Record summary: An RNA of 207 nucleotides, treated with 2A3 and read out base by base. The reactions ran in a buffer of 150 mM KOAc, 10 mM MgCl2 and 150 mM bicine (pH 8.5), at 24 C. The 2A3 profile rests on 481 reads.
RNA sequence: GGGAACGACUCGAGUAGAGUCGAAAACUUAACAUUGAAGAGCUCUCUUUCUUAGACUAUUAUCACUUAAAAUUUGAGCACAUUUAGCUUUCACGACCUCUAAUAUUGGUAUGAAAUAAACCUAGCAUUUAAGCUAAAGACACAGUGGAAUGUCUAAUCCAAAAUACCCAUUCGUGGGUAUUUUGGAAAAAGAAACAACAACAACAAC
Reactivity to 2A3 in 0.01 (KOAc 150mM, MgCl2 10mM, bicine 150mM(pH8.5), 24C), signal-to-noise 2, nucleotides 027 to 156: c010u060u030a110a000c030a150u110u170g070a110a060g000a140g090c020u030c010u000c000u080u060u020c070u010u040a060g030a050c060u020a130u110u060a140u050c010a030c090u090u080a110a110a160a300u190u120u230g060a010g040c010a030c000a080u030u080u060a000g000c000u070u040u160c100a060c180g040a100c060c040u070c050u140a100a090u100a180u230u040g000g000u120a100u120g100a110a010a050u110a060a090a010c040c040u050a050g090c010a040u250u240u030a050a030g000c000u000a110a000a000g060a040c040a000c010a040g050u060g020g070a050a000u040g020u060c000u010a000a060